[RMDB]
RNA sequence: GGGAACGACUCGAGUAGAGUCGAAAAGAUGCGGCGGCCCUGUCAUGAGGCCGAAACGAAGGCACGUACCCCUUCGAAUGGCGUCGGGGAGUCAGCGGCUAUAUAUGCGCCUAAUGCUGGCAUCCGGGAGAACCCUCAUCCUUCGGGAUGAGGGUAAACACUACUAUGUAUUCGUACAUAGUAGUGUAAAAGAAACAACAACAACAAC
Reactivity to 2A3 in 0.01 (KOAc 150mM, MgCl2 10mM, bicine 150mM(pH8.5), 24C), signal-to-noise 5, nucleotides 027 to 156: g080a020u120g010c040g020g000c010g000g010c040c000c000u020g040u030c060a050u060g030a020g020g010c010c000g030a020a010a000c000g000a000a020g030g000c100a020c210g080u110a060c030c010c020c020u020u010c020g020a050a030u040g010g020c070g150u010c020g010g000g010g000a160g030u020c000a000g020c010g020g000c040u020a020u020a020u020a020u300g130c070g040c030c020u190a260a060u290g010c000u010g000g000c010a030u000c000c010g000g020g000a170g050a030a040c000c000c000u000c000a000u000c010c000u080u100c210g060g000g000a000u000g000a010g000g000g000u000a000a000
Reactivity to DMS in 0.01 (KOAc 150mM, MgCl2 10mM, bicine 150mM(pH8.5), 24C), signal-to-noise 3, nucleotides 027 to 156: g010a050u000g010c050g030g020c000g000g000c000c020c020u010g020u010c250a140u000g000a060g020g020c020c000g010a020a040a110c050g000a030a050g030g000c050a140c100g010u000a180c010c030c000c010u000u000c030g040a120a160u000g010g020c040g020u000c040g010g020g020g020a180g020u000c030a050g050c030g010g000c040u000a110u010a080u010a120u000g010c050g020c020c040u000a070a130u010g030c000u000g000g030c000a060u000c020c000g000g010g010a210g010a130a090c010c000c010u000c010a020u000c000c010u000u000c300g030g000g020a010u000g000a000g000g010g010u000a000a020
An RNA of 207 nucleotides, treated with 2A3 and DMS and read out base by base. The data come from the RNA Mapping Database (RMDB), library M2RFPK. The reactions ran in a buffer of 150 mM KOAc, 10 mM MgCl2 and 150 mM bicine (pH 8.5), at 24 C. For DMS, 7,351 sequencing reads were counted. DMS adducts were read by reverse transcription with MarathonRT. Reactivities are given for positions 27 through 156.